[RMDB]
Conditions: 150 mM KOAc, 10 mM MgCl2 and 150 mM bicine (pH 8.5), 24 C. This 170-nucleotide RNA was probed chemically with DMS and 2A3. For DMS, 9,442 sequencing reads were counted. The 2A3 profile rests on 5,556 reads. It was measured as part of the RMDB library 15KLIB. In probing experiments dimethyl sulfate is read out at A N1 and C N3, which are open when not base-paired.
RNA sequence: GGGAACGACUCGAGUAGAGUCGAAAAGGGUCUCCGCCCGCCCCCAGCCCCGGGAUAGCCGAAGUGCCGAGGAAGAGCCGGAGGAGGAGAGGCAAGAGAUCCCGAGGGGGCUUCAGGCUAAAGAGUGAAACCAACCUCUUCGGAGGUUGGAAAAGAAACAACAACAACAAC
Reactivity to DMS in 0.01 (KOAc 150mM, MgCl2 10mM, bicine 150mM(pH8.5), 24C), signal-to-noise 4, nucleotides 027 to 129: g000g010g050u020c030u030c090c100g030c010c000c040g030c050c010c010c010c020a290g010c050c010c050c030g090g010g000a080u020a040g070c050c020g000a150a090g010u030g060c060c050g000a070g040g020a000a000g010a010g000c060c080g020g010a090g020g030a000g030g020a100g000a080g040g000c120a060a050g030a140g040a100u030c000c000c000g050a120g020g010g050g030g010c150u050u070c080a100g030g000c090u090a080a090a040g010a100g000u070g040a040a120a200
Reactivity to 2A3 in 0.01 (KOAc 150mM, MgCl2 10mM, bicine 150mM(pH8.5), 24C), signal-to-noise 3, nucleotides 027 to 129: g030g000g000u010c040u010c030c010g020c020c010c020g030c000c000c000c000c000a000g000c000c000c000c000g010g000g000a100u070a000g030c030c030g030a110a020g070u030g080c000c040g010a020g060g010a010a040g020a020g050c020c030g010g000a060g010g000a000g040g030a060g000a010g000g010c020a060a010g040a010g000a100u030c000c030c000g010a100g010g010g010g000g010c000u020u050c060a030g010g000c050u110a090a080a030g060a020g070u190g030a100a000a010